RNA sequence: GGGAACGACUCGAGUAGAGUCGAAAACGUUUCGGCCACGGCGAGGUCGCCAACAGUUCGAUCGUGCGGUUCAGACAAGGGCCAACUCCGGUUUCGACGAGCCCGGAUCGCGCCGGGCUGGUUGCGCCGCAACCUCCGAAUUCGUUCGGAGGUUGCGAAAAGAAACAACAACAACAAC
Reactivity to DMS in 0.01 (KOAc 150mM, MgCl2 10mM, bicine 150mM(pH8.5), 24C), signal-to-noise 1, nucleotides 027 to 126: c030g000u000u000u000c020g000g000c070c080a140c090g000g000c030g010a110g050g060u010c050g050c030c150a110a160c180a130g030u020u010c090g000a110u000c070g020u000g000c060g000g000u010u000c040a000g040a070c140a080a080g010g000g000c140c010a030a080c180u010c090c040g000g010u000u000u000c060g000a080c000g010a150g040c000c030c000g000g030a080u000c160g000c110g000c030c000g020g000g030c000u000g000g000u000u040g000c300g010c050
Reactivity to 2A3 in 0.01 (KOAc 150mM, MgCl2 10mM, bicine 150mM(pH8.5), 24C), signal-to-noise 2, nucleotides 027 to 126: c010g000u000u070u100c000g020g000c010c000a070c030g050g000c010g040a060g110g000u100c020g040c020c020a100a090c000a030g070u100u060c010g010a050u010c050g020u050g100c070g000g010u020u130c030a040g080a100c040a060a180g060g000g030c000c000a040a000c040u020c040c010g030g080u000u040u110c130g010a120c000g010a000g010c060c010c000g030g000a070u060c050g000c020g060c060c000g000g020g000c000u020g000g040u040u050g010c070g010c040
An RNA of 177 nucleotides, treated with DMS and 2A3 and read out base by base. Reactivities are given for positions 27 through 126. In probing experiments dimethyl sulfate is read out at A N1 and C N3, which are open when not base-paired. Source: RMDB library OK1LIB, as collected in RNAgym. The DMS profile rests on 1,218 reads. For 2A3 the reverse transcriptase was SuperScript II with manganese. The reactions ran in a buffer of 150 mM KOAc, 10 mM MgCl2 and 150 mM bicine (pH 8.5), at 24 C.